RNA sequence: GGGAACGACUCGAGUAGAGUCGAAAAGUGAGGAUCCUGCGCAUGCGCGUACGUGCGCUGGCCGAUCGAGUGCGCAGCGGCGCUCUCGAUCGAUCGAGUACCAGCGCGUACCGUACGGUACGUCGUAGGCUUACUGGAUGUUCGCAUCCAGUAAGCCAAAAGAAACAACAACAACAAC
Reactivity to DMS in 0.01 (KOAc 150mM, MgCl2 10mM, bicine 150mM(pH8.5), 24C), signal-to-noise 2, nucleotides 027 to 126: g000u000g000a090g000g000a070u010c010c000u000g030c000g030c030a100u000g020c040g040c040g000u000a010c010g020u000g010c020g010c000u000g000g010c070c010g010a010u000c010g000a010g020u000g010c010g060c010a250g030c270g020g010c000g010c000u000c000u000c010g000a010u000c020g010a040u010c160g010a170g010u020a160c020c000a020g000c010g010c000g000u010a030c300c050g000u010a020c040g020g000u010a030c030g010u010c040g030u000a060
Reactivity to 2A3 in 0.01 (KOAc 150mM, MgCl2 10mM, bicine 150mM(pH8.5), 24C), signal-to-noise 2, nucleotides 027 to 126: g210u130g040a060g050g050a030u050c000c000u040g030c030g030c020a050u190g000c240g000c030g050u010a020c010g040u070g000c040g000c000u000g000g000c050c000g010a000u000c010g000a000g020u050g000c010g000c030a220g160c190g300g000c010g120c010u010c000u020c010g030a030u020c000g000a070u090c110g040a030g030u070a150c000c010a020g010c020g000c020g000u100a080c060c000g000u030a010c020g010g010u040a040c000g050u030c020g010u060a040

Structure probing data (DMS and 2A3) for a 177-nucleotide construct.